Notes
Structure probing data (2A3 and DMS) for a 170-nucleotide construct. Conditions: 150 mM KOAc, 10 mM MgCl2 and 150 mM bicine (pH 8.5), 24 C.

[RMDB]
RNA sequence: GGGAACGACUCGAGUAGAGUCGAAAAGAAAAAGAGGAGCGGGCCUCCCGAUCCGAGGGGCCCGGUGGCCUGAUCUGGAGGGCACUCCGGGCCGUAGGGAAGAAAAGCACCCAGAGGGAGGAAGCCAUAGGGCUCAGGUUCGCCUGAGCCAAAAGAAACAACAACAACAAC
Reactivity to 2A3 in 0.01 (KOAc 150mM, MgCl2 10mM, bicine 150mM(pH8.5), 24C), signal-to-noise 2, nucleotides 027 to 129: g050a020a060a000a000a000g050a040g030g000a030g030c100g000g020g020c010c000u000c000c010c000g010a060u040c020c030g020a070g020g090g000g000c030c010c000g010g010u020g010g030c020c020u050g030a150u130c050u130g120g040a060g020g040g000c060a140c120u010c000c000g000g000g000c010c010g000u040a000g000g010g010a000a040g010a010a050a010a000g020c010a020c040c040c010a020g030a000g020g000g000a020g010g000a020a000g010c000c000a020u140a030g110
Reactivity to DMS in 0.01 (KOAc 150mM, MgCl2 10mM, bicine 150mM(pH8.5), 24C), signal-to-noise 4, nucleotides 027 to 129: g020a050a040a030a090a080g020a130g000g000a000g000c080g000g000g000c070c000u010c090c020c010g020a150u050c020c060g020a110g010g000g000g000c050c010c000g020g060u010g000g000c020c020u020g010a150u060c190u050g000g030a270g000g010g060c030a080c040u030c000c000g010g000g010c000c030g000u050a080g000g000g010a070a070g010a040a080a070a090g030c150a070c030c010c050a050g010a300g030g000g000a060g040g010a180a060g010c080c040a130u000a000g000
Reactivities are rounded to 0.1 and cut off at 0 and 3.
2A3 adducts were read by reverse transcription with SuperScript II with manganese.